The record gives the reactivity of an RNA of 177 nucleotides to DMS and 2A3. For DMS, 2,846 sequencing reads were counted. The data come from the RNA Mapping Database (RMDB), library OK2TST.
RNA sequence: GGGAACGACUCGAGUAGAGUCGAAAAGUGGUGGGAUUAGAGGUGUGAGCCACUGUGCCCAGCUGCAGAUUUUUUAUAGUAUUUUGGAGUCAAAGGCCAACCAUGAUUCUGGAGGGGCACCAGGUGGAACGCUUGUGUAAUUCGUUACACAAGCGUUAAAAGAAACAACAACAACAAC
Reactivity to DMS in 0.01 (KOAc 150mM, MgCl2 10mM, bicine 150mM(pH8.5), 24C), signal-to-noise 3, nucleotides 027 to 126: g000u010g010g020u000g010g000g000a170u000u010a110g010a110g030g010u010g010u010g010a160g020c020c000a000c020u000g010u010g010c010c000c010a140g000c040u000g000c050a050g010a010u000u010u010u010u010u010a070u010a100g020u000a060u000u000u000u010g010g010a080g020u010c130a050a070a120g000g000c050c050a050a110c140c050a090u000g000a020u010u000c020u000g020g010a080g020g020g000g000c010a040c050c260a060g000g020u010g020g000
Reactivity to 2A3 in 0.01 (KOAc 150mM, MgCl2 10mM, bicine 150mM(pH8.5), 24C), signal-to-noise 1, nucleotides 027 to 126: g070u060g020g090u100g010g030g030a110u100u100a120g000a040g040g060u110g030u030g040a050g010c040c000a000c010u010g020u020g000c000c010c030a060g170c030u080g000c030a000g030a130u010u050u070u080u040u280a210u150a100g100u020a180u020u130u040u070g040g040a020g060u160c100a100a060a030g060g040c000c000a000a010c020c000a030u060g030a030u050u060c020u060g040g080a040g000g000g000g000c000a000c040c010a070g000g060u080g000g010

Overview:
In probing experiments dimethyl sulfate is read out at A N1 and C N3, which are open when not base-paired.